[RMDB]
RNA sequence: GGGAACGACUCGAGUAGAGUCGAAAACUUCGUCUUCGGACGAAGAAAAAAUCCUAAGUCGACAUGAAUCGGUUUGGAGCUAUGAAGCAUCGGAAACGAUGUGGAGCUCUGAUCGAUUCAACAGCGAUAUGGAAAAAAACUACUCUUCGGAGUAGAAUCUGAUAGCAUUCUUCGGAAUGCUAUCAGAAAAAGAAACAACAACAACAAC
Reactivity to 2A3 in 0.01 (KOAc 150mM, MgCl2 10mM, bicine 150mM(pH8.5), 24C), signal-to-noise 1, nucleotides 027 to 156: c000u000u000c000g000u010c010u010u020c280g100g000a000c000g020a020a010g040a010a000a010a000a000a000u040c060c000u090a150a000g060u000c000g010a170c090a170u060g000a030a020u000c000g030g100u070u160u300g100g020a000g000c000u040a070u300g000a010a000g000c000a000u000c000g050g050a090a070a110c010g020a000u010g000u000g000g000a000g000c000u000c000u000g000a000u000c000g020a000u000u000c000a000a000c000a030g010c010g020a010u040a030u120g060g020a000a070a020a040a130a000a060c000u160a000c000u000c000u120u080c300g130g000a000g010u010a000g030a010a060